[RMDB]
RNA sequence: GGGAACGACUCGAGUAGAGUCGAAAAGAUAUGGAUACCACGCAACAGCAUACGUCUCGGAAACGAGACUAUGACAUGCGUGAAUCCUAAGUCAAAACACUUGCGACUGUUCGCAGUCGCAAGUGAAGAAUUGGUGCAUGUUCGCAUGCACCAAUUCAAAAGAAACAACAACAACAAC
Reactivity to DMS in 0.01 (KOAc 150mM, MgCl2 10mM, bicine 150mM(pH8.5), 24C), signal-to-noise 2, nucleotides 027 to 126: g000a020u000a260u000g020g010a040u000a080c120c000a000c000g000c020a040a100c260a200g000c030a000u000a000c170g010u000c000u000c000g030g000a080a040a130c000g000a010g000a000c000u000a000u000g000a060c090a200u000g000c000g000u030g000a070a020u000c000c000u000a040a170g010u010c010a110a110a100a210c000a020c010u010u000g000c010g030a030c000u000g000u010u040c190g060c000a020g000u000c000g000c000a000a000g010u000g000a040a080
Reactivity to 2A3 in 0.01 (KOAc 150mM, MgCl2 10mM, bicine 150mM(pH8.5), 24C), signal-to-noise 2, nucleotides 027 to 126: g000a020u050a020u050g010g000a000u030a130c120c030a010c010g000c000a040a280c050a300g160c010a020u030a020c220g000u000c000u020c030g000g040a060a060a000c000g010a020g000a010c000u000a000u000g050a090c030a070u060g000c000g000u000g000a010a000u000c020c000u010a090a000g050u040c000a000a030a050a150c000a010c010u010u010g000c000g010a010c020u030g050u100u140c300g000c160a000g040u000c010g000c010a010a000g000u000g000a020a040
Record summary:
The record gives the reactivity of an RNA of 177 nucleotides to DMS and 2A3. It was measured as part of the RMDB library TTRDEL. Values cover nucleotides 27 to 126. DMS adducts were read by reverse transcription with MarathonRT. High DMS reactivity at an A or C suggests that its Watson-Crick edge is free. The reactions ran in a buffer of 150 mM KOAc, 10 mM MgCl2 and 150 mM bicine (pH 8.5), at 24 C. The 2A3 profile rests on 3,097 reads.